[RMDB]
RNA sequence: GGGAACGACUCGAGUAGAGUCGAAAAGUAGUUGAUGCAGAGUGAGGGCAACAACAACAAAAAGAAAAGAUGUUCCAUUCUCACUAACUCUCGAAAAGAAAGGAACACAUUCACUCAAGGAAGAAAACUUGUUUUUAAUGUUCGCGUUAAGAGCAAGAAAAGAAACAACAACAACAAC
Reactivity to DMS in 0.01 (KOAc 150mM, MgCl2 10mM, bicine 150mM(pH8.5), 24C), signal-to-noise 9, nucleotides 027 to 126: g010u010a060g010u000u010g010a070u000g020c020a040g020a030g020u010g000a030g010g010g010c010a020a040c020a020a020c040a080a060c070a030a070a080a080a090g010a070a040a080a110g020a150u010g000u010u000c010c000a150u010u010c000u000c040a120c080u010a090a090c080u020c080u010c140g010a070a060a080a060g000a040a080a070g010g000a010a010c020a020c050a100u010u000c060a050c040u000c040a080a060g000g020a110a070g000a060a040a050a070
Reactivity to 2A3 in 0.01 (KOAc 150mM, MgCl2 10mM, bicine 150mM(pH8.5), 24C), signal-to-noise 9, nucleotides 027 to 126: g120u150a000g000u000u020g010a060u030g010c010a000g020a010g070u000g010a020g010g020g010c000a010a010c000a000a010c010a000a010c050a020a150a030a020a010g250a060a100a020a010g120a200u060g010u010u000c000c000a020u100u000c010u000c010a030c010u010a070a040c010u040c020u040c100g080a050a030a020a030g090a030a040a030g020g000a010a000c020a000c000a060u080u080c010a030c020u050c040a040a040g100g020a040a040g050a020a060a010a020